Annotation: An RNA of 177 nucleotides, treated with 2A3 and DMS and read out base by base. 2A3 adducts were read by reverse transcription with SuperScript II with manganese.
[RMDB]
RNA sequence: GGGAACGACUCGAGUAGAGUCGAAAAGACAGUCGAAAGAACGUACGUUCGAGGCCCCGAUCGUACGGAAGCCAUCUUAUCUGGCGGGAUAUGAUGGGAAGGGCCGAAACCGCCGAAAAGACUGGAAGGAUAAGUCUAUCUUCGGAUAGACUUAUCCAAAAGAAACAACAACAACAAC
Reactivity to 2A3 in 0.01 (KOAc 150mM, MgCl2 10mM, bicine 150mM(pH8.5), 24C), signal-to-noise 6, nucleotides 027 to 126: g080a030c020a020g030u070c020g080a070a050a040g050a110a040c020g010u030a010c020g020u040u010c040g020a120g050g070c030c000c000c000g020a070u030c000g000u030a020c020g030g060a050a020g030c000c000a000u000c010u030u040a030u020c030u090g070g050c070g030g020g000a010u020a020u070g030a020u050g030g020g040a070a090g070g020g020c010c000g000a050a010a010c020c000g010c010c000g030a100a070a000a000g040a040c030u050g010g050a100a090
Reactivity to DMS in 0.01 (KOAc 150mM, MgCl2 10mM, bicine 150mM(pH8.5), 24C), signal-to-noise 4, nucleotides 027 to 126: g000a190c010a000g000u000c010g010a100a090a110g010a080a100c000g000u000a030c030g010u020u000c010g000a160g000g010c020c010c030c040g000a040u010c020g000u030a020c030g000g010a080a120g010c000c000a010u000c010u010u010a020u000c020u000g000g000c040g000g000g010a030u000a000u010g000a000u000g010g000g000a110a140g000g010g000c020c040g000a040a060a070c060c020g000c020c030g030a090a040a080a180g000a010c010u000g010g000a220a110

About this RNA:
The RNA was probed in 150 mM KOAc, 10 mM MgCl2 and 150 mM bicine (pH 8.5) at 24 C. For DMS the reverse transcriptase was MarathonRT. For DMS, 10,426 sequencing reads were counted.